[RMDB]
RNA sequence: GGGAACGACUCGAGUAGAGUCGAAAAAAAAAGAGCGUAAUCGCGUCAUUGAGUGACGUGAAGAUCUUCCAAGUGUGCUGUCUACAGUCGUAGAUAGCGCACAAUACGCUGAUGAUCAUUCAAAAAAACUGUCUCAAGUGUUCGCACUUGAGACAGUAAAAGAAACAACAACAACAAC
Reactivity to DMS in 0.01 (KOAc 150mM, MgCl2 10mM, bicine 150mM(pH8.5), 24C), signal-to-noise 1, nucleotides 027 to 126: a030a070a080a080a040g010a040g030c010g000u000a060a060u000c020g000c000g000u000c000a030u020u010g030a210g030u010g000a030c010g030u000g000a030a060g000a020u010c010u010u000c030c010a060a150g010u000g010u000g000c000u000g010u000c000u010a000c000a160g020u020c200g050u000a010g010a000u000a000g000c020g000c010a000c010a030a040u010a040c010g000c020u000g030a110u000g010a010u000c080a090u030u000c050a000a010a060a050a050a080
Reactivity to 2A3 in 0.01 (KOAc 150mM, MgCl2 10mM, bicine 150mM(pH8.5), 24C), signal-to-noise 2, nucleotides 027 to 126: a000a000a000a010a010g140a000g000c060g000u030a040a000u040c000g000c000g000u000c000a020u050u260g110a070g280u040g000a010c020g010u010g020a000a040g050a090u000c110u070u000c050c010a110a100g000u010g000u000g000c000u020g020u000c010u000a040c060a290g120u260c160g000u150a000g000a020u010a000g040c010g000c000a030c000a000a000u000a000c010g000c000u010g000a050u060g010a000u040c100a130u140u150c110a130a010a030a030a000a000